[RMDB]
RNA sequence: GGGAACGACUCGAGUAGAGUCGAAAAUAUCACUGCAACCUCCGCCUCCUGGGCUCAAGCCAUCCUCCUACCUCAGUCUCCGGAGUAGCUAGGACUACAAGCGUGCACCACCAUGCCCGGCUAAUUGGAUAUACUUAGCUUUCGAGCUAAGUAUAUCAAAAGAAACAACAACAACAAC
Reactivity to DMS in 0.01 (KOAc 150mM, MgCl2 10mM, bicine 150mM(pH8.5), 24C), signal-to-noise 7, nucleotides 027 to 126: u020a080u010c050a060c050u010g010c070a070a110c050c030u000c020c040g010c070c020u010c040c040u000g010g010g020c050u010c080a060a130g010c040c050a060u010c030c010u000c080c030u010a070c070c030u000c050a040g010u020c020u010c030c030g000g010a110g000u010a040g000c060u040a090g010g020a100c050u000a040c080a080a110g000c020g000u020g000c050a050c030c030a070c040c040a070u000g010c000c010c010g000g000c060u000a050a100u020u030g010
Reactivity to 2A3 in 0.01 (KOAc 150mM, MgCl2 10mM, bicine 150mM(pH8.5), 24C), signal-to-noise 9, nucleotides 027 to 126: u170a030u060c050a030c060u050g010c020a040a070c010c010u040c010c020g020c010c020u040c010c030u050g030g030g000c020u030c090a070a040g020c010c000a030u020c010c000u010c000c010u040a070c000c020u040c020a030g060u030c020u000c040c010g040g020a050g030u020a010g010c040u060a050g010g100a080c020u050a020c060a080a020g040c010g050u040g010c010a020c010c010a020c010c000a050u070g020c000c010c010g030g000c030u060a110a090u130u130g070
An RNA of 177 nucleotides, treated with DMS and 2A3 and read out base by base. The RNA was probed in 150 mM KOAc, 10 mM MgCl2 and 150 mM bicine (pH 8.5) at 24 C. The data come from the RNA Mapping Database (RMDB), library OK1LIB. For DMS the reverse transcriptase was MarathonRT.